[RMDB]
RNA sequence: GGGAACGACUCGAGUAGAGUCGAAAAGCACUGAACUUGCCGGAGGAGGACUUCGCCCAGACUUAUGGACGCGUCAAGCCGGCCGUCGAUGCGGUCUUGAUCUUCUCGUGCAAGGCGGGAGGACGCGCAUUAGCGACCUGUUCGCAGGUCGCUAAUGAAAAGAAACAACAACAACAAC
Reactivity to DMS in 0.01 (KOAc 150mM, MgCl2 10mM, bicine 150mM(pH8.5), 24C), signal-to-noise 7, nucleotides 027 to 126: g010c050a070c070u000g010a080a090c030u010u010g010c020c020g010g000a080g000g020a140g000g000a060c040u020u050c060g010c030c020c020a050g010a080c190u020u040a080u010g000g000a040c030g010c300g000u010c040a060a060g010c070c030g010g010c010c200g010u000c070g000a070u010g000c020g000g000u010c020u010u010g000a140u010c000u000u010c000u010c000g040u010g000c130a090a060g000g010c000g000g000g000a040g000g000a040c040g000c110g010
Reactivity to 2A3 in 0.01 (KOAc 150mM, MgCl2 10mM, bicine 150mM(pH8.5), 24C), signal-to-noise 9, nucleotides 027 to 126: g050c020a020c090u090g030a140a030c010u070u110g000c000c010g030g020a040g020g050a050g040g050a050c020u070u020c080g010c000c000c010a030g060a080c030u160u160a080u210g060g010a010c030g030c010g030u030c020a040a050g060c040c010g020g000c020c010g060u050c050g060a070u150g020c020g000g030u020c030u040u170g080a150u020c010u040u000c020u020c010g030u070g030c070a110a080g160g000c000g000g010g010a010g010g010a040c030g010c020g000

Chemical mapping of a 177-nucleotide RNA with DMS and 2A3. 2A3 adducts were read by reverse transcription with SuperScript II with manganese. The RNA was probed in 150 mM KOAc, 10 mM MgCl2 and 150 mM bicine (pH 8.5) at 24 C.